[RMDB]
RNA sequence: GGGAACGACUCGAGUAGAGUCGAAAAUAUCAAUACAGGGAUUGCUUGUUGGAAUGUCAAGCAUGAACGAGGAAUUCCUAGUAAGCGUGUAUCAUUAGUUCGCGUUGAUUACGUCCCUGCCCUUUGUACAGUAAUACAUGUUCGCAUGUAUUACUGUAAAAGAAACAACAACAACAAC
Reactivity to DMS in 0.01 (KOAc 150mM, MgCl2 10mM, bicine 150mM(pH8.5), 24C), signal-to-noise 9, nucleotides 027 to 126: u020a040u010c050a110a210u010a050c030a030g000g000g010a040u000u000g000c020u000u000g010u000u000g010g010a130a040u010g010u010c220a080a130g010c030a020u000g000a060a040c010g000a030g010g000a040a040u000u000c000c000u000a110g020u000a050a190g000c030g010u000g010u000a040u010c100a140u020u010a100g020u000u000c020g010c040g010u000u000g000a040u000u010a080c130g000u000c000c000c000u010g000c100c070c020u000u000u000g010u000
Reactivity to 2A3 in 0.01 (KOAc 150mM, MgCl2 10mM, bicine 150mM(pH8.5), 24C), signal-to-noise 9, nucleotides 027 to 126: u140a010u020c030a030a030u050a080c020a010g000g000g010a010u010u020g140c010u020u010g010u040u040g090g230a110a070u050g060u140c100a080a060g060c010a030u030g020a000a000c000g000a020g000g040a010a020u010u010c000c000u020a080g040u060a050a040g010c020g010u030g060u100a050u110c070a210u160u240a110g070u090u080c010g000c010g020u020u040g010a050u020u060a040c070g030u020c000c000c000u030g040c020c010c010u040u030u050g170u020